[RMDB]
RNA sequence: GGGAACGACUCGAGUAGAGUCGAAAACUUAUUGUGAUUAUUUUACCUAAGACAGUAGGAGUUAUUUAUAACUUAAAAUUUAUCCUGCCGAGGCUAAAAUUGACUUGAACGUGAUGAUCUAUGAUCUCUAUCACAUAAUUUUCGAAUUAUGUGAUAGAAAAGAAACAACAACAACAAC
Reactivity to 2A3 in 0.01 (KOAc 150mM, MgCl2 10mM, bicine 150mM(pH8.5), 24C), signal-to-noise 5, nucleotides 027 to 126: c040u120u120a120u160u250g050u070g140a080u060u210a030u000u030u030u050a010c000c010u020a040a020g030a030c030a020g030u020a030g010g020a020g020u030u050a090u090u200u060a200u080a030a030c000u010u020a020a010a020a060u210u290u280a040u070c000c000u000g020c000c020g020a000g010g010c040u040a000a000a030a130u060u140g040a060c040u050u100g040a110a000c060g060u040g020a060u060g030a010u010c060u110a160u190g090a080u040c010u000
Reactivity to DMS in 0.01 (KOAc 150mM, MgCl2 10mM, bicine 150mM(pH8.5), 24C), signal-to-noise 3, nucleotides 027 to 126: c010u000u070a090u020u000g010u000g030a130u010u000a040u000u000u000u000a050c030c040u010a160a110g010a090c300a090g010u010a020g010g000a050g000u000u010a030u030u050u020a070u000a030a020c020u010u010a010a010a100a190u010u000u030a020u010c000c000u000g010c010c000g000a010g000g000c300u000a010a020a020a040u000u010g020a090c080u010u000g010a090a050c120g000u000g000a060u010g000a040u000c020u010a100u000g010a070u020c100u000

An RNA of 177 nucleotides, treated with 2A3 and DMS and read out base by base. Reactivities are given for positions 27 through 126. Conditions: 150 mM KOAc, 10 mM MgCl2 and 150 mM bicine (pH 8.5), 24 C. Source: RMDB libraries RFM100 and RFMREP, as collected in RNAgym. For 2A3 the reverse transcriptase was SuperScript II with manganese.